[RMDB]
RNA sequence: GGGAACGACUCGAGUAGAGUCGAAAAGGUAUCUAAUCAGCAUGAGUAAAUAACCAGCUCUAAGGAGGAUGUGAUAUACCACCCAGUGUGGGGACUGCUGGGUAUGGCAGUGGUUCUUACACUGAAUCAUGCUCUGGAGUCACUUGGAGGCUUAUUACUAAUUAGGUACUUUCGAGUACCUAAUUAGAAAAGAAACAACAACAACAAC
Reactivity to DMS in 0.01 (KOAc 150mM, MgCl2 10mM, bicine 150mM(pH8.5), 24C), signal-to-noise 2, nucleotides 027 to 156: g010g010u000a060u000c070u000a050a090u000c040a090g060c030a080u030g010a110g010u000a030a080a090u000a100a180c070c020a090g020c020u000c020u010a110a150g030g000a060g020g020a040u000g020u010g010a170u000a080u000a120c060c010a110c040c030c000a060g020u010g110u000g010g000g000g010a040c020u000g000c000u000g020g030g050u000a050u000g010g000c020a020g030u000g010g020u000u000c060u000u000a020c010a040c020u010g010a080a060u000c040a040u000g000c010u000c060u010g010g020a090g010u010c020a070c080u000u000g000g020a170g010g020c060u000u000a040u000u000a180
Reactivity to 2A3 in 0.01 (KOAc 150mM, MgCl2 10mM, bicine 150mM(pH8.5), 24C), signal-to-noise 3, nucleotides 027 to 156: g060g000u090a040u040c030u180a090a080u040c020a000g050c030a080u060g040a060g100u180a050a140a120u180a100a090c020c030a050g000c000u010c020u080a090a150g070g010a010g040g010a060u060g050u060g100a040u040a030u030a170c000c040a000c010c020c000a000g000u000g000u000g010g030g000g010a000c000u000g000c000u010g040g120g060u160a160u100g100g000c000a000g010u000g000g000u010u020c000u010u020a010c010a000c010u010g000a000a040u080c030a010u040g020c030u010c000u040g060g020a010g020u040c020a020c090u030u040g060g010a020g020g020c020u000u120a040u070u060a210
The record gives the reactivity of an RNA of 207 nucleotides to DMS and 2A3. The reactions ran in a buffer of 150 mM KOAc, 10 mM MgCl2 and 150 mM bicine (pH 8.5), at 24 C. For 2A3 the reverse transcriptase was SuperScript II with manganese. The 2A3 profile rests on 1,687 reads. Values cover nucleotides 27 to 156.